[RMDB]
RNA sequence: GGGAACGACUCGAGUAGAGUCGAAAAUCUGAAGUGUCCCCUGCCUGGCAACUUCCUCCUGCCUGACAGCCUGUUCGGCAGCCCAGCUGCACAGGCAGCAGAAGUGGACACCAGCUUCACACUGAGGUGAUCACCAAGGGUUCGCCCUUGGUGAUCAAAAAGAAACAACAACAACAAC
Reactivity to DMS in 0.01 (KOAc 150mM, MgCl2 10mM, bicine 150mM(pH8.5), 24C), signal-to-noise 1, nucleotides 027 to 126: u020c020u000g000a190a100g040u000g010u000c000c020c060c050u000g000c020c000u040g020g000c020a060a110c130u020u000c090c060u020c090c040u000g020c010c000u010g010a200c290a200g000c130c110u010g000u000u000c140g020g000c000a040g020c060c070c020a090g000c020u000g000c030a040c010a000g000g010c010a070g010c130a040g000a090a130g040u000g010g020a030c070a030c020c080a040g000c110u000u000c080a060c090a100c130u000g010a130g000g010

Conditions: 150 mM KOAc, 10 mM MgCl2 and 150 mM bicine (pH 8.5), 24 C.
The record gives the reactivity of an RNA of 177 nucleotides to DMS.
For DMS the reverse transcriptase was MarathonRT.